[RMDB]
RNA sequence: GGGAACGACUCGAGUAGAGUCGAAAAGCAACAUAGAUCGUUCUAUUAACGAACACGCGCGGAUCGUCGCUGGUCGGCGAGCCCACGGACGUACUUGAUCGCGCGAACGAGUAAAAAUCGCCGGCAAGGAAUAGCCAUGAUUCGUCAUGGCUAUUCCAAAAGAAACAACAACAACAAC
Reactivity to 2A3 in 0.01 (KOAc 150mM, MgCl2 10mM, bicine 150mM(pH8.5), 24C), signal-to-noise 2, nucleotides 027 to 126: g000c000a000a070c040a120u200a080g060a130u100c050g030u040u020c030u100a300u190u300a130a060c090g010a050a010c030a010c080g020c000g000c010g020g050a070u060c040g020u000c010g060c160u110g090g020u040c000g000g000c000g000a010g000c030c000c000a030c030g080g000a000c010g040u070a060c030u090u190g060a110u210c020g000c000g000c000g050a040a010c030g050a060g050u080a010a090a020a000a020u020c000g000c010c000g000g000c030a060a050
Reactivity to DMS in 0.01 (KOAc 150mM, MgCl2 10mM, bicine 150mM(pH8.5), 24C), signal-to-noise 2, nucleotides 027 to 126: g020c050a060a030c080a110u000a120g000a090u010c050g000u000u000c090u010a290u010u000a070a070c110g000a040a030c070a180c080g000c010g000c060g030g000a090u000c020g030u000c030g000c090u000g000g020u010c000g000g010c000g000a040g000c040c010c040a110c130g010g020a020c030g030u000a090c090u020u000g020a070u020c060g000c040g040c000g000a040a090c040g040a110g010u000a030a050a050a180a030u000c020g000c020c040g060g000c060a130a050
Chemical mapping of a 177-nucleotide RNA with 2A3 and DMS. For 2A3, 1,520 sequencing reads were counted. The RNA was probed in 150 mM KOAc, 10 mM MgCl2 and 150 mM bicine (pH 8.5) at 24 C. It was measured as part of the RMDB library M2PK90.